An RNA of 177 nucleotides, treated with DMS and 2A3 and read out base by base. For 2A3, 1,984 sequencing reads were counted. 2A3 adducts were read by reverse transcription with SuperScript II with manganese. DMS adducts were read by reverse transcription with MarathonRT. The reactions ran in a buffer of 150 mM KOAc, 10 mM MgCl2 and 150 mM bicine (pH 8.5), at 24 C.
RNA sequence: GGGAACGACUCGAGUAGAGUCGAAAAGGAAGCACGGCUACAAAAGGAAUGGGAAAGAAAUCAAGGAACUUCUUCCAUAUGUAUGGAGUCGAGCCUGAAAAUUACACUACGCUUCGUUUUGUGGACCCAGCGUAGCUUGAUUCGUCAAGCUACGCUGAAAAGAAACAACAACAACAAC
Reactivity to DMS in 0.01 (KOAc 150mM, MgCl2 10mM, bicine 150mM(pH8.5), 24C), signal-to-noise 3, nucleotides 027 to 126: g010g020a090a080g010c060a120c180g010g010c030u010a030c040a020a030a060a040g000g010a040a020u020g010g020g000a100a080a050g010a040a050a040u010c100a200a060g000g010a050a060c040u010u000c020u010u000c010c000a010u010a150u030g000u030a050u000g000g000a040g000u010c020g010a040g000c010c010u010g000a040a040a050a050u000u010a110c060a050c050u000a120c040g020c040u000u010c020g000u000u000u020u000g020u000g000g000a150c060c030
Reactivity to 2A3 in 0.01 (KOAc 150mM, MgCl2 10mM, bicine 150mM(pH8.5), 24C), signal-to-noise 2, nucleotides 027 to 126: g050g040a050a040g040c050a040c100g030g000c020u070a030c020a010a040a010a010g050g050a060a050u180g040g000g060a070a040a040g040a030a070a030u060c030a050a060g050g010a030a090c000u030u010c000u150u000c020c010a060u110a090u230g270u090a050u050g020g000a030g000u040c040g010a000g000c000c000u000g000a000a140a000a070u080u050a010c060a000c040u060a020c070g060c190u040u040c030g150u050u000u020u030g020u030g040g050a120c000c000